[RMDB]
RNA sequence: GGGAACGACUCGAGUAGAGUCGAAAAUAUGAUCUUUCAAUUAUUAAUGCACGUAUUAAAGCUAAGCACAUUGUCUAUGUAGGAGAUCCAGCACAGUUGCCAGCUCCUAGGACUUUGUUGACUAGAGGGUGUUGAAAUAGUUCGCUAUUUCAACACCAAAAGAAACAACAACAACAAC
Reactivity to DMS in 0.01 (KOAc 150mM, MgCl2 10mM, bicine 150mM(pH8.5), 24C), signal-to-noise 1, nucleotides 027 to 126: u000a090u000g000a070u000c030u000u010u010c070a120a160u010u010a090u010u010a050a030u000g000c150a040c050g010u010a070u000u000a070a120a200g000c040u000a030a020g010c030a030c030a020u000u000g020u000c000u020a100u030g020u000a030g000g000a020g010a070u010c110c110a070g000c040a050c120a180g010u020u000g020c000c110a160g000c000u010c000c010u000a030g000g000a030c010u010u000u010g020u000u000g010a070c000u000a010g010a140g010
Reactivity to 2A3 in 0.01 (KOAc 150mM, MgCl2 10mM, bicine 150mM(pH8.5), 24C), signal-to-noise 1, nucleotides 027 to 126: u130a030u040g090a020u050c020u020u170u010c070a080a060u140u100a070u060u180a140a040u100g000c030a020c130g060u030a080u080u140a190a070a030g010c000u030a000a080g020c010a000c000a000u000u000g020u000c010u050a110u170g280u070a010g000g000a000g000a040u000c000c080a010g000c010a020c040a080g140u170u040g060c000c020a000g020c000u000c000c020u010a020g000g000a000c000u030u030u000g050u100u060g050a080c050u010a000g000a110g140